An RNA of 177 nucleotides, treated with 2A3 and DMS and read out base by base.
The RNA was probed in 150 mM KOAc, 10 mM MgCl2 and 150 mM bicine (pH 8.5) at 24 C.
For 2A3 the reverse transcriptase was SuperScript II with manganese.
For DMS, 1,261 sequencing reads were counted.
RNA sequence: GGGAACGACUCGAGUAGAGUCGAAAAAGGGCGCUGGUUUCAAAACUCUGGCAGAAGGCCAGCAAGUUGAAUUCACCAUUGAAAAUGGUGCGAAAGGCCCAGCAGCUGCUAACGUAACUGCAAUCUACCAUACUAUAGGCUUCGGCCUAUAGUAUGGAAAAGAAACAACAACAACAAC
Reactivity to 2A3 in 0.01 (KOAc 150mM, MgCl2 10mM, bicine 150mM(pH8.5), 24C), signal-to-noise 1, nucleotides 027 to 126: a010g070g010g000c140g000c150u050g110g050u100u110u020c030a090a110a030a010c010u000c010u050g050g000c040a030g110a300a020g300g000c020c000a000g020c020a020a030g030u040u050g020a070a030u050u040c010a010c010c020a000u060u000g090a000a140a000a090u010g000g000u000g000c040g000a060a010a000g050g010c010c010c000a020g000c020a000g000c000u150g000c020u080a150a000c070g070u040a010a020c010u000g000c000a020a030u030c000u060a070
Reactivity to DMS in 0.01 (KOAc 150mM, MgCl2 10mM, bicine 150mM(pH8.5), 24C), signal-to-noise 2, nucleotides 027 to 126: a060g010g030g010c020g010c060u000g030g030u020u010u000c010a040a010a070a030c070u000c000u010g010g000c010a300g020a150a180g010g000c000c000a010g000c250a040a010g000u000u000g000a050a060u000u000c010a030c000c000a000u000u010g010a060a080a160a040u000g010g010u000g000c200g000a050a070a030g000g000c010c010c010a160g000c000a010g020c020u010g000c030u000a120a130c240g010u000a040a020c020u010g000c000a160a170u000c090u000a140